[RMDB]
RNA sequence: GGGAACGACUCGAGUAGAGUCGAAAAUGCAGGCAGGCCGCGUGAUUCGUCACGAAUGUGCCGAAUUUGUGUUGCAUGGUCGGGUUGAUGCGAAUGAGCGUGAAUCAUCCGUAGGGCUGAGUAAAAGCUAUGUUGUCUUCUUCGGAAGACAACAUAGAAAAGAAACAACAACAACAAC
Reactivity to 2A3 in 0.01 (KOAc 150mM, MgCl2 10mM, bicine 150mM(pH8.5), 24C), signal-to-noise 3, nucleotides 027 to 126: u020g030c000a010g050g040c020a030g040g010c000c000g020c010g020u020g020a030u010u080c130g030u000c060a010c030g170a280a220u300g060u110g020c000c000g040a000a010u070u050u030g030u000g040u050u080g030c040a020u040g050g030u100c040g010g020g000u030u100g040a120u060g010c030g060a080a140u120g030a060g050c040g020u010g110a070a040u020c010a000u020c000c040g000u050a100g020g000g040c040u050g070a010g070u120a030a080a010a000g030
Reactivity to DMS in 0.01 (KOAc 150mM, MgCl2 10mM, bicine 150mM(pH8.5), 24C), signal-to-noise 5, nucleotides 027 to 126: u010g000c030a050g010g010c110a140g010g010c030c030g020c040g030u000g000a040u000u000c130g010u010c000a000c000g000a100a070u010g030u000g020c010c000g010a040a060u010u000u000g020u000g000u010u000g020c030a040u000g010g010u000c040g000g010g020u010u010g010a120u000g010c030g010a070a060u000g010a090g010c100g020u000g000a080a060u010c020a040u000c020c040g020u010a110g010g000g010c030u020g000a110g010u000a050a060a090a100g000